[RMDB]
RNA sequence: GGGAACGACUCGAGUAGAGUCGAAAAGUAAUCCAAUUCAUUGGUGAUACUACAUAACUUCGCUAAUUGAUCAUUUUGAUCAAUAUAUCAUUCAAGUUUCUGCCCUAUCAGCUUGAUGGUAGUGUAUGAAAUGAAACCCAUUCGUGGGUUUCAUUUCAAAAGAAACAACAACAACAAC
Reactivity to DMS in 0.01 (KOAc 150mM, MgCl2 10mM, bicine 150mM(pH8.5), 24C), signal-to-noise 2, nucleotides 027 to 126: g000u000a030a180u000c030c010a010a070u000u000c290a100u000u000g000g000u020g000a240u030a030c010u000a020c140a060u000a080a110c130u000u000c080g050c100u000a070a070u010u000g020a000u000c000a090u010u010u050u030g010a010u000c000a000a000u000a120u020a020u020c060a030u010u020c060a040a040g040u020u030u030c180u010g000c040c020c020u020a170u000c070a000g010c120u010u030g000a070u040g000g000u000a000g060u010g010u000a090u020
Reactivity to 2A3 in 0.01 (KOAc 150mM, MgCl2 10mM, bicine 150mM(pH8.5), 24C), signal-to-noise 4, nucleotides 027 to 126: g030u020a020a030u030c020c050a020a010u260u130c100a160u050u030g000g000u040g020a080u060a260c000u020a050c040a130u230a200a130c040u180u110c060g000c100u050a100a010u030u010g000a010u010c060a120u050u200u200u300g000a000u000c000a000a000u110a020u020a000u050c030a060u140u200c090a080a020g010u030u060u000c050u090g040c000c000c000u040a060u100c040a000g070c060u040u300g010a070u000g030g040u000a060g030u020g020u040a130u060

An RNA of 177 nucleotides, treated with DMS and 2A3 and read out base by base. The RNA was probed in 150 mM KOAc, 10 mM MgCl2 and 150 mM bicine (pH 8.5) at 24 C.